[RMDB]
RNA sequence: GGGAACGACUCGAGUAGAGUCGAAAACGUGAUGUGUUCGCACAUCACGAAACUUUGAAGCCGGGAAACACGGCUACCGGCAACAAAGCCGAGUAACAAAGAAAACGCCUGACUUCGGUCAGGCGAACCCUGUAAAGAAGUUCGCUUCUUUACAGGGAAAAGAAACAACAACAACAAC
Reactivity to DMS in 0.01 (KOAc 150mM, MgCl2 10mM, bicine 150mM(pH8.5), 24C), signal-to-noise 3, nucleotides 027 to 126: c030g010u000g000a020u000g040u000g000u000u010c190g020c000a000c000a000u000c010a020c000g010a070a050a100c010u000u000u000g000a080a300g010c010c010g010g000g000a170a070a150c090a050c070g000g000c040u000a040c010c000g000g000c020a040a190c120a080a080a070g010c010c020g010a110g030u010a040a100c060a040a040a060g000a140a120a120a190c020g020c000c000u000g000a010c000u010u010c150g010g000u010c010a010g000g000c000g000a010a020
Reactivity to 2A3 in 0.01 (KOAc 150mM, MgCl2 10mM, bicine 150mM(pH8.5), 24C), signal-to-noise 1, nucleotides 027 to 126: c010g000u000g000a000u010g000u000g030u020u040c120g080c070a010c000a000u010c010a000c020g000a000a000a000c020u040u000u060g050a070a000g010c020c010g000g000g010a030a150a050c070a020c050g020g020c010u000a010c000c000g020g000c000a030a050c030a100a140a000g000c000c010g020a050g060u080a130a000c080a090a060a020g120a030a140a010a050c010g020c000c010u000g000a010c000u010u030c300g080g020u000c020a000g000g030c000g010a000a000